This 177-nucleotide RNA was probed chemically with DMS and 2A3. DMS adducts were read by reverse transcription with MarathonRT. The data come from the RNA Mapping Database (RMDB), library OK2TRN. The DMS profile rests on 5,483 reads.
[RMDB]
RNA sequence: GGGAACGACUCGAGUAGAGUCGAAAAUGUCAUCAGACGUACGUCAGCUAUCUAGUACCGAGCGCCGAUCGCGCAGUAGGCCAUGAUCUGAGUCGCGGCCGCGCGUACUGGCCUAGUACGCGCGAUCUAUCCGUCCUAGUUUCGACUAGGACGGAUAAAAAGAAACAACAACAACAAC
Reactivity to DMS in 0.01 (KOAc 150mM, MgCl2 10mM, bicine 150mM(pH8.5), 24C), signal-to-noise 5, nucleotides 027 to 126: u010g000u000c050a100u010c160a110g020a080c070g030u000a050c090g010u010c050a080g010c080u000a070u000c050u010a090g010u000a100c040c040g010a120g020c060g010c040c080g000a040u000c050g000c040g020c010a110g010u000a030g010g020c030c020a080u010g010a090u000c130u010g010a080g010u000c030g010c050g000g010c100c130g010c020g020c020g020u000a030c040u000g010g010c050c030u000a040g010u000a060c080g000c010g020c010g000a020u000c030
Reactivity to 2A3 in 0.01 (KOAc 150mM, MgCl2 10mM, bicine 150mM(pH8.5), 24C), signal-to-noise 3, nucleotides 027 to 126: u080g020u050c020a110u050c050a100g050a080c030g050u090a010c050g060u040c050a020g000c030u060a050u130c030u060a030g040u060a120c040c020g060a010g030c030g010c010c060g050a070u050c020g010c010g000c040a060g060u050a010g000g000c000c020a090u160g040a090u040c090u120g110a060g110u040c040g030c010g090g070c110c030g120c010g000c000g040u030a040c010u030g050g000c010c010u030a030g060u030a020c050g000c010g010c010g000a010u010c010